[RMDB]
RNA sequence: GGGAACGACUCGAGUAGAGUCGAAAAAAAAGAUAUGGAAACCAGAGGAAAGCAAGGUCACGAGGUCGGAAACGACCUCUUUGGUGACUGAUGACCUUUCUACCCACCUGGUUUCCUAAGUCAAAAAGUAAAGGAAGUGGUUCGCCACUUCCUUUACAAAAGAAACAACAACAACAAC
Reactivity to DMS in 0.01 (KOAc 150mM, MgCl2 10mM, bicine 150mM(pH8.5), 24C), signal-to-noise 1, nucleotides 027 to 126: a050a040a010a030g000a080u010a300u000g000g000a010a010a000c010c010a000g010a300g000g000a020a000a040g000c040a130a080g010g000u000c000a040c040g010a020g000g000u010c000g000g000a080a140a040c000g000a010c000c020u000c030u000u010u000g070g020u000g000a020c020u000g010a020u000g000a040c300c000u000u010u010c010u000a150c090c020c180a300c250c000u000g010g000u000u010u000c000c000u000a000a050g000u020c000a070a100a130a080a170

The data come from the RNA Mapping Database (RMDB), library TTRDES. The record gives the reactivity of an RNA of 177 nucleotides to DMS. Conditions: 150 mM KOAc, 10 mM MgCl2 and 150 mM bicine (pH 8.5), 24 C. Values cover nucleotides 27 to 126.